[RMDB]
RNA sequence: GGGAACGACUCGAGUAGAGUCGAAAACGGGGUUGAAUCCGACUCUCAUAGGCUCUCCAACCCAACUCCUACUCAAUACGUCCUCGUCGUACAGAACGGUAACAUGUUUUCCGAACAUCCGCGCUUGCAAACCUGCCAAAGUUCGCUUUGGCAGGAACAUGGAAAAUUUCUUCGGAAAUUUUCCAUGAAAAGAAACAACAACAACAAC
Reactivity to 2A3 in 0.01 (KOAc 150mM, MgCl2 10mM, bicine 150mM(pH8.5), 24C), signal-to-noise 2, nucleotides 027 to 156: c060g020g000g010g010u040u010g060a030a040u190c020c010g140a130c060u070c000u030c110a160u120a160g030g050c010u000c000u000c020c010a030a010c050c000c000a010a030c000u050c020c000u000a020c010u010c050a080a130u090a170c020g040u080c020c020u030c020g020u020c020g010u070a040c020a110g080a100a040c000g000g000u080a050a010c040a130u130g040u020u010u040u080c040c050g020a020a010c000a010u040c030c030g020c020g030c060u040u060g060c060a040a100a190c010c000u000g000c000c010a000a010a020g000u000u120c110g030c120u000u000u000g000g000c000a000g030g000a000a000